[RMDB]
RNA sequence: GGGAACGACUCGAGUAGAGUCGAAAAUUAAAGCGCGAAAAAGAUCGAUCGAUCGUUUGAACGCGCAAGUCGAAGUUUGAUACGGGCAUACUAGCUAGCUAGCUAGCAAAUCAAACUUCGUAAAAAAGUAUGUGAACAGAUUCGUCUGUUCACAUACAAAAGAAACAACAACAACAAC
Reactivity to DMS in 0.01 (KOAc 150mM, MgCl2 10mM, bicine 150mM(pH8.5), 24C), signal-to-noise 5, nucleotides 027 to 126: u000u010a070a110a130g010c000g030c000g010a050a070a030a050a060g000a010u000c000g020a180u020c210g000a010u000c000g010u000u000u000g010a140a140c010g000c010g010c010a040a050g010u010c000g010a010a010g020u000u000u000g010a010u000a110c220g020g010g000c140a110u000a170c010u000a010g000c010u000a150g000c160u010a050g030c010u000a010g000c040a030a090a030u000c000a010a010a000c010u000u000c000g010u000a000a020a060a080a050a050
Reactivity to 2A3 in 0.01 (KOAc 150mM, MgCl2 10mM, bicine 150mM(pH8.5), 24C), signal-to-noise 4, nucleotides 027 to 126: u150u090a170a070a000g000c010g000c000g060a040a050a000a020a020g010a010u010c040g090a130u170c160g000a010u000c070g090u050u060u070g060a130a020c000g000c000g000c020a000a000g040u000c010g000a000a000g000u010u010u000g030a020u050a100c100g080g020g060c040a060u100a210c030u000a030g010c010u010a040g130c030u030a000g000c000u000a010g030c030a070a080a010u000c000a000a000a010c000u010u000c010g000u030a080a080a010a010a020a030
Conditions: 150 mM KOAc, 10 mM MgCl2 and 150 mM bicine (pH 8.5), 24 C.
Structure probing data (DMS and 2A3) for a 177-nucleotide construct.
DMS adducts were read by reverse transcription with MarathonRT.
2A3 adducts were read by reverse transcription with SuperScript II with manganese.